[RMDB]
RNA sequence: GGGAACGACUCGAGUAGAGUCGAAAAGUGCGCGCUAGCUGUGGGUUCCAUCCACAGGAUCUGUGGCGUAGCUAACGCAUUAAGCGCGCCGCGUGGGGAGUACAGCAGCAAAGCUAAAACUCAAACGAAAUAAUAUGAUAUUCGUAUCAUAUUAUUUAAAAGAAACAACAACAACAAC
Reactivity to DMS in 0.01 (KOAc 150mM, MgCl2 10mM, bicine 150mM(pH8.5), 24C), signal-to-noise 9, nucleotides 027 to 126: g010u030g000c010g010c090g010c010u000a110g030c030u000g010u000g000g010g000u010u020c050c060a100u020c010c010a020c010a110g010g000a070u030c070u010g030u010g000g020c090g010u020a110g010c070u010a100a080c150g000c060a120u030u020a100a090g000c010g000c020g010c000c020g010c050g030u010g000g000g000g000a030g000u010a060c210a050g010c010a080g010c140a050a120a110g000c020u010a050a070a100a050c030u010c030a060a090a080c160g000
Reactivity to 2A3 in 0.01 (KOAc 150mM, MgCl2 10mM, bicine 150mM(pH8.5), 24C), signal-to-noise 5, nucleotides 027 to 126: g070u080g000c020g000c000g000c010u020a040g000c010u010g000u010g020g030g010u090u040c020c010a040u030c010c000a020c000a010g030g030a030u020c050u070g090u030g040g000c010g000u020a020g000c020u030a030a020c010g010c030a020u050u070a030a010g000c000g000c000g000c000c000g000c020g020u060g010g040g000g000a030g010u040a030c020a030g000c010a000g040c030a070a060a010g010c010u050a020a010a030a040c020u040c000a070a030a020c050g050